[RMDB]
RNA sequence: GGGAACGACUCGAGUAGAGUCGAAAACGUUCAGACGACGGUAACCAGCAUCAACAAGAAGAUCGUCGAGAAGCUUGAGCAGUCAGCGUCGGCUUCAGCGGAAGCCCACUGCGAUGUCAGUAUCGGAAACAUCUUUUUCGGCAACAAUCGGGGAUGCCCCAUACGAAAGGUUCGCCUUUCGUAUGGGAAAAGAAACAACAACAACAAC
Reactivity to DMS in 0.01 (KOAc 150mM, MgCl2 10mM, bicine 150mM(pH8.5), 24C), signal-to-noise 1, nucleotides 027 to 156: c020g010u000u000c060a300g050a110c070g100a050c050g020g020u010a110a100c080c000a090g000c050a210u000c080a040a140c110a040a040g010a110a090g020a090u000c060g000u010c040g000a230g030a050a210g000c020u000u010g020a120g060c020a120g000u000c070a090g010c000g000u000c100g000g000c010u000u000c030a180g000c130g010g000a020a040g030c010c010c010a100c030u010g000c020g000a170u000g030u010c030a090g000u000a000u020c010g090g000a130a080a020c020a110u000c050u000u000u000u000u000c030g010g000c090a060a080c050a060a100u000c030g000g030g010g020a100u020g010c010
Reactivity to 2A3 in 0.01 (KOAc 150mM, MgCl2 10mM, bicine 150mM(pH8.5), 24C), signal-to-noise 3, nucleotides 027 to 156: c020g020u040u050c040a050g020a110c030g000a000c000g070g050u050a040a120c010c020a040g080c010a070u070c050a050a190c020a040a110g060a020a000g020a070u040c010g030u000c020g030a020g020a040a000g010c080u210u230g030a030g020c030a040g080u170c040a000g010c030g160u040c020g000g000c000u050u020c040a020g120c040g180g000a010a020g010c000c020c040a010c040u070g000c020g050a050u040g060u070c030a010g020u050a070u180c070g070g020a030a060a040c050a110u050c050u040u050u010u030u050c000g020g010c010a070a020c010a120a100u070c030g010g000g030g020a010u030g040c000